Record summary
Structure probing data (2A3 and DMS) for a 170-nucleotide construct. The reactions ran in a buffer of 150 mM KOAc, 10 mM MgCl2 and 150 mM bicine (pH 8.5), at 24 C. The data come from the RNA Mapping Database (RMDB), library 15KLIB. The DMS profile rests on 24,403 reads.

[RMDB]
RNA sequence: GGGAACGACUCGAGUAGAGUCGAAAACCGAGGGAACUACGUUCUCCUUCGGAUGCCCAGGUCGGACCGCGAGGAGGUGGAGAUACCAUGCCGACCCGAAGAAGGAAAGGAGGACACGGACGACAAAACAGUCAUCACUUCGGUGAUGACAAAAGAAACAACAACAACAAC
Reactivity to 2A3 in 0.01 (KOAc 150mM, MgCl2 10mM, bicine 150mM(pH8.5), 24C), signal-to-noise 8, nucleotides 027 to 129: c000c000g000a020g030g020g000a060a030c030u120a070c270g090u090u020c030u020c030c000u040u040c000g020g000a020u110g010c000c000c000a020g010g060u040c030g000g050a100c010c030g020c020g030a050g000g020a020g000g000u050g030g010a050g000a020u100a050c030c030a040u090g040c000c020g020a030c000c000c020g030a050a030g020a020a020g020g000a030a010a010g010g010a010g010g000a010c010a000c050g030g010a020c020g020a020c070a010a110a020a020c060a040
Reactivity to DMS in 0.01 (KOAc 150mM, MgCl2 10mM, bicine 150mM(pH8.5), 24C), signal-to-noise 6, nucleotides 027 to 129: c000c000g020a050g070g000g020a010a000c110u010a040c240g050u090u000c070u030c010c020u040u040c030g020g000a070u000g060c050c010c010a110g000g000u050c060g020g050a140c060c040g000c090g040a060g000g000a050g000g000u060g030g000a080g000a110u000a080c000c000a100u040g050c070c050g000a120c070c050c100g000a050a050g010a070a070g020g050a020a030a010g070g020a050g000g030a000c090a020c130g000g000a040c080g010a070c070a050a070a090a060c160a110